Background: This 177-nucleotide RNA was probed chemically with DMS and 2A3. It was measured as part of the RMDB library OK2TRN.
RNA sequence: GGGAACGACUCGAGUAGAGUCGAAAAGCGGAUAACAUUCUCGAUGUAGAACCUCUAGAACCUAUCCAAAUGGAUCUAGAUCCUGAGGAAGACACUACGGUGAAUGAAUGGUUCUAUGAUCACAAACGUUCUAUGAACGAUUCGUCGUUCAUAGAACAAAAGAAACAACAACAACAAC
Reactivity to DMS in 0.01 (KOAc 150mM, MgCl2 10mM, bicine 150mM(pH8.5), 24C), signal-to-noise 5, nucleotides 027 to 126: g020c120g020g000a100u010a100a130c100a170u000u000c010u000c030g020a090u000g000u000a040g000a050a050c020c020u000c020u010a040g010a190a040c040c010u000a110u010c020c020a030a130a130u000g000g010a010u000c100u020a140g000a150u000c000c000u000g010a300g000g010a050a070g010a220c100a030c080u000a070c110g030g000u000g020a110a090u000g020a090a090u020g010g000u000u000c010u000a000u000g010a030u000c070a070c190a070a100a110c210
Reactivity to 2A3 in 0.01 (KOAc 150mM, MgCl2 10mM, bicine 150mM(pH8.5), 24C), signal-to-noise 6, nucleotides 027 to 126: g090c060g050g060a100u090a250a110c030a110u080u010c060u020c060g030a020u080g000u040a020g010a040a020c010c010u000c010u020a050g040a100a030c010c010u070a160u000c000c000a060a270a100u090g010g000a000u000c020u070a110g010a280u000c010c000u000g020a030g010g010a030a030g050a020c040a010c080u150a040c180g060g000u020g050a090a070u100g050a060a070u130g020g000u000u000c000u000a010u040g110a040u050c020a020c080a140a140a030c100